[RMDB]
RNA sequence: GGGAACGACUCGAGUAGAGUCGAAAACAAAACAGGGCAAAAUAAAGACUAGUUAAGGCCAAACUAGCAAAAGGCCAAAAGAAGGCCAAGCGUAAUGCAACUGAAGCAGUACGCAAUUCAGUUAAAACCAUCAUCCGAUAUUCGUAUCGGAUGAUGGAAAAGAAACAACAACAACAAC
Reactivity to DMS in 0.01 (KOAc 150mM, MgCl2 10mM, bicine 150mM(pH8.5), 24C), signal-to-noise 2, nucleotides 027 to 126: c060a090a040a160a080c300a060g000g000g020c060a100a050a110a080u070a010a040a090g010a190c000u000a030g000u000u000a040a080g010g010c010c050a060a070a010c000u000a000g010c010a030a060a050a040g000g000c000c000a080a040a030a080g010a190a110g000g000c000c000a110a100g000c000g010u000a050a030u010g010c030a020a060c300u030g020a100a110g000c000a000g000u000a050c000g000c020a070a000u050u000c190a060g050u000u050a000a190a020a150
Reactivity to 2A3 in 0.01 (KOAc 150mM, MgCl2 10mM, bicine 150mM(pH8.5), 24C), signal-to-noise 3, nucleotides 027 to 126: c040a010a060a040a050c150a130g080g020g110c070a080a060a170a060u150a070a230a020g090a010c010u000a000g030u060u060a200a010g040g000c000c010a050a000a010c000u000a000g000c020a000a000a000a110g020g000c020c040a120a130a000a000g190a070a020g010g000c000c000a040a010g000c000g000u030a080a000u050g000c040a140a020c100u130g050a190a000g000c010a000g020u010a000c020g000c000a020a080u230u080c020a020g020u050u080a030a040a060a050